[RMDB]
RNA sequence: GGGAACGACUCGAGUAGAGUCGAAAAUCUGUCGCUCGCAAUAGCCUUCAUCGCUUGAUGCUUUUGACCACGGAUGUACUGGCACUGGUAGGAAAGCGAUGAUCAGGAAGGUCGGUGCGUUUUCGCCGUAUUGAUGUAUGUUCGCAUACAUCAAUACAAAAGAAACAACAACAACAAC
Reactivity to DMS in 0.01 (KOAc 150mM, MgCl2 10mM, bicine 150mM(pH8.5), 24C), signal-to-noise 8, nucleotides 027 to 126: u010c080u010g020u000c020g020c030u010c040g010c070a090a120u010a160g000c010c010u000u000c010a010u000c010g020c010u010u000g010a300u000g010c010u000u000u000u000g010a170c020c010a020c120g000g020a150u010g010u010a120c190u000g000g000c010a030c030u000g000g000u000a030g000g010a090a020a010g010c000g000a010u000g000a020u010c190a040g010g010a060a040g010g010u010c020g020g010u010g010c020g000u000u000u000u000c040g010c260c130
Reactivity to 2A3 in 0.01 (KOAc 150mM, MgCl2 10mM, bicine 150mM(pH8.5), 24C), signal-to-noise 9, nucleotides 027 to 126: u060c040u050g150u110c030g000c030u020c020g010c030a050a130u040a140g040c000c010u010u010c000a010u010c000g000c010u000u020g030a020u040g020c000u050u040u030u030g210a300c020c000a040c080g140g060a140u240g060u210a110c030u030g010g000c010a000c010u010g040g000u020a030g010g220a060a010a000g000c000g020a000u010g000a030u070c040a000g020g020a030a010g040g020u160c020g020g040u100g030c020g010u020u010u020u050c060g010c020c040
An RNA of 177 nucleotides, treated with DMS and 2A3 and read out base by base. Values cover nucleotides 27 to 126. The data come from the RNA Mapping Database (RMDB), library RFMREP. For DMS the reverse transcriptase was MarathonRT. The RNA was probed in 150 mM KOAc, 10 mM MgCl2 and 150 mM bicine (pH 8.5) at 24 C. The DMS profile rests on 15,623 reads.